[RMDB]
RNA sequence: GGGAACGACUCGAGUAGAGUCGAAAAGGGGCUGACAGGAAUCGACAGUAGAGUGUAUCAUGUCAGUAAGCAUGCCGGGGAAUGGUGGUUUACCCCGUUAUCCAAUGAUUACCGACCAAUAAUUGGCUUAGCUCGUUGGGCUUCGGCCCAACGAGAACACACUCAUAAGGUUCGCCUUAUGAGUGUGAAAAGAAACAACAACAACAAC
Reactivity to 2A3 in 0.01 (KOAc 150mM, MgCl2 10mM, bicine 150mM(pH8.5), 24C), signal-to-noise 5, nucleotides 027 to 156: g000g000g000g020c000u010g010a020c010a020g010g070a080a090u100c080g070a040c040a040g130u180a050g060a060g060u110g010u030a090u130c050a040u040g010u020c020a020g040u030a040a010g040c030a040u140g060c030c000g000g000g000g000a030a060u070g020g030u020g020g020u070u050u150a090c010c010c000c010g020u040u060a040u050c030c020a050a050u060g050a060u100u080a080c030c040g080a060c010c050a040a040u200a090a090u060u050g040g010c040u060u090a040g020c000u000c000g000u000u000g000g000g000c000u010u030c160g080g000c000c000c000a000a000c000g020a000g010a000a000
Reactivity to DMS in 0.01 (KOAc 150mM, MgCl2 10mM, bicine 150mM(pH8.5), 24C), signal-to-noise 2, nucleotides 027 to 156: g000g020g030g020c030u020g020a120c070a060g010g000a120a120u000c000g030a050c000a060g010u000a140g020a110g030u000g000u000a110u000c000a110u000g000u010c010a060g010u000a070a060g000c000a040u000g040c120c070g030g000g030g010a080a090u000g010g010u000g030g000u000u000u000a150c020c010c020c000g050u000u000a050u060c030c050a050a060u000g010a080u000u000a050c000c000g000a020c020c030a060a090u000a050a100u010u010g010g010c040u000u010a110g000c000u010c010g000u030u010g000g010g030c030u000u000c300g050g050c020c000c000a000a000c010g000a020g000a020a090
Notes
Chemical mapping of a 207-nucleotide RNA with 2A3 and DMS. DMS adducts were read by reverse transcription with MarathonRT. Values cover nucleotides 27 to 156. 2A3 adducts were read by reverse transcription with SuperScript II with manganese. The DMS profile rests on 3,935 reads. The 2A3 profile rests on 4,350 reads. Source: RMDB library M2RFPK, as collected in RNAgym. The reactions ran in a buffer of 150 mM KOAc, 10 mM MgCl2 and 150 mM bicine (pH 8.5), at 24 C.